[RMDB]
RNA sequence: GGGAACGACUCGAGUAGAGUCGAAAAUUACAUCGUGCUAGCGAGGGAACCUUGUCUGGGGGUGAACCGCGAAACAGUUCCAGGCUCACCGUUAGAAAUCCUGUCUUUCGGAGUUCGAGCGGUUAAAUAAAAGAGAGACUAAGCAUGUAGCGCCUUGCGUAGUAGUGAUCUUCGGAUCACUACUACGAAAAGAAACAACAACAACAAC
Reactivity to DMS in 0.01 (KOAc 150mM, MgCl2 10mM, bicine 150mM(pH8.5), 24C), signal-to-noise 2, nucleotides 027 to 156: u000u010a120c040a100u020c010g030u020g010c030u000a180g000c050g040a130g030g000g010a120a080c010c020u000u000g010u000c000u000g000g000g030g030g020u000g020a120a090c020c050g080c010g010a100a050a100c090a150g020u000u000c000c020a120g020g000c030u000c030a060c000c000g030u010u030a130g010a020a030a050u000c020c020u010g010u000c060u000u000u000c060g020g020a080g050u020u010c020g010a090g000c020g010g040u000u000a060a090a110u000a050a130a110a110g000a060g030a100g010a060c060u000a050a060g010c000a050u000g010u010a130g010c050g000c040c020u000u000g000
Reactivity to 2A3 in 0.01 (KOAc 150mM, MgCl2 10mM, bicine 150mM(pH8.5), 24C), signal-to-noise 4, nucleotides 027 to 156: u230u100a050c040a090u070c060g050u030g010c020u020a040g010c000g050a300g020g000g020a020a040c010c010u030u090g030u050c010u020g000g000g030g000g000u010g020a060a030c020c020g000c030g030a030a030a030c100a030g050u170u080c000c000a000g030g000c040u050c030a010c010c010g000u010u010a020g000a010a020a000u010c010c010u010g000u020c030u010u040u020c010g000g000a000g020u020u020c000g010a020g000c020g000g000u050u110a060a080a020u100a010a020a010a000g010a000g000a000g010a000c020u090a040a040g010c020a040u090g050u160a030g030c020g050c060c030u040u050g030